The data come from the RNA Mapping Database (RMDB), library VIROID. The record gives the reactivity of an RNA of 207 nucleotides to 2A3. For 2A3, 729 sequencing reads were counted. High 2A3 reactivity points to a flexible backbone, as in loops and unpaired stretches. Reactivities are given for positions 27 through 156. 2A3 adducts were read by reverse transcription with SuperScript II with manganese.
RNA sequence: GGGAACGACUCGAGUAGAGUCGAAAAUGAUGUUCCCCAGCCAGGUAUUUUCAUCCUCUAGCCUCUUGAUCUUCUUCUUAACCUUCCGGAGUUCUCUCUCGAGUUCCUCUAACUUCUUUCUUCCGCUCACCCACUGCUCUAGGAUCUCUUCUCUCCCGUACUUUUCUAUCUUCGGAUAGAAAAGUACAAAAGAAACAACAACAACAAC
Reactivity to 2A3 in 0.01 (KOAc 150mM, MgCl2 10mM, bicine 150mM(pH8.5), 24C), signal-to-noise 1, nucleotides 027 to 156: u210g010a040u110g000u000u000c000c000c000c000a030g020c000c020a030g000g110u120a110u120u130u140u220c060a060u060c010c020u010c030u040a040g000c010c000u050c010u070u030g060a070u120c020u090u000c000u120u000c010u080u070a040a090c000c020u050u000c040c000g070g000a080g090u150u040c040u000c010u000c010u010c020g000a020g040u030u060c000c010u000c000u040a080a110c010u040u110c000u180u130u020c000u070u010c000c000g020c020u020c040a080c040c020c000a080c060u060g010c010u000c030u050a090g050g030a120u020c020u030c000u120u010c010u020c000u020c010c030c000